[RMDB]
RNA sequence: GGGAACGACUCGAGUAGAGUCGAAAAACAUUGGCCUUCGGGCCAAUGUACUCGAAAUAAAGCCGAAAGGCUACGCAUUCCUUAUUUGGCGAAAGCCUGCGAGAUUAUGUAAGUUCGCUUACAUAAACUCUUCUACUGAUUUCGAUCAGUAGAAGAGAAAAGAAACAACAACAACAAC
Reactivity to DMS in 0.01 (KOAc 150mM, MgCl2 10mM, bicine 150mM(pH8.5), 24C), signal-to-noise 4, nucleotides 027 to 126: a040c000a000u000u010g010g010c000c000u010u020c210g030g020g010c000c000a000a010u000g000u000a020c070u000c040g000a070a090a060u000a050a120a040g010c010c000g010a120a100a140g000g010c020u000a050c100g000c130a160u000u000c030c020u000u010a110u000u010u000g000g010c010g000a100a060a100g010c020c000u000g000c110g000a110g000a180u010u000a000u000g000u000a000a000g010u000u010c230g020c010u000u000a000c010a010u000a010a020a200
Reactivity to 2A3 in 0.01 (KOAc 150mM, MgCl2 10mM, bicine 150mM(pH8.5), 24C), signal-to-noise 6, nucleotides 027 to 126: a000c000a000u000u010g000g000c000c020u030u050c300g030g010g000c000c000a000a000u000g010u000a000c020u010c020g070a040a070a130u270a160a190a010g010c010c010g050a080a050a000g010g000c010u010a020c030g000c020a070u060u090c020c000u130u200a210u180u200u110g030g000c020g040a100a010a010g000c000c000u000g010c050g060a140g040a150u050u040a010u020g000u000a000a020g010u010u090c250g000c100u000u000a000c000a000u020a030a030a020